[RMDB]
RNA sequence: GGGAACGACUCGAGUAGAGUCGAAAAUGGCAGACCAACCGCGUUCCGGCGGACUUGAUGGCGUCAGCGAAAACCGCGGGGUCCCCGAACGACAGCAUCACCGCCACCGGCUCAUACUGCAGCGCGAGCUUCGAUUCUAAUUCGUUAGAAUCGAAGCAAAAGAAACAACAACAACAAC
Reactivity to 2A3 in 0.01 (KOAc 150mM, MgCl2 10mM, bicine 150mM(pH8.5), 24C), signal-to-noise 9, nucleotides 027 to 126: u050g050g000c020a010g040a090c010c020a040a050c020c010g010c010g050u090u080c060c030g040g000c040g030g020a040c040u100u140g100a070u130g110g060c020g020u030c030a020g030c020g110a070a050a020a040c050c010g010c020g010g020g010g040u060c020c010c010c000g040a060a020c030g050a020c010a020g030c000a030u030c020a010c020c010g020c020c010a030c010c000g030g000c020u010c030a090u110a140c030u060g020c020a030g010c050g010c030g060a030
Reactivity to DMS in 0.01 (KOAc 150mM, MgCl2 10mM, bicine 150mM(pH8.5), 24C), signal-to-noise 5, nucleotides 027 to 126: u040g000g010c050a050g010a100c070c050a120a150c040c030g000c040g000u000u020c080c070g010g010c050g000g000a080c090u000u020g000a090u010g000g020c060g000u000c020a050g040c060g020a080a030a090a070c130c050g010c050g010g000g000g020u000c020c000c040c030g030a070a060c090g010a090c060a100g000c040a050u010c030a070c040c040g020c040c010a070c040c030g000g030c020u010c040a100u000a050c040u000g020c020a030g010c070g010c080g010a130
About this RNA
Conditions: 150 mM KOAc, 10 mM MgCl2 and 150 mM bicine (pH 8.5), 24 C. Structure probing data (2A3 and DMS) for a 177-nucleotide construct. It was measured as part of the RMDB library OK1LIB. The DMS profile rests on 9,875 reads.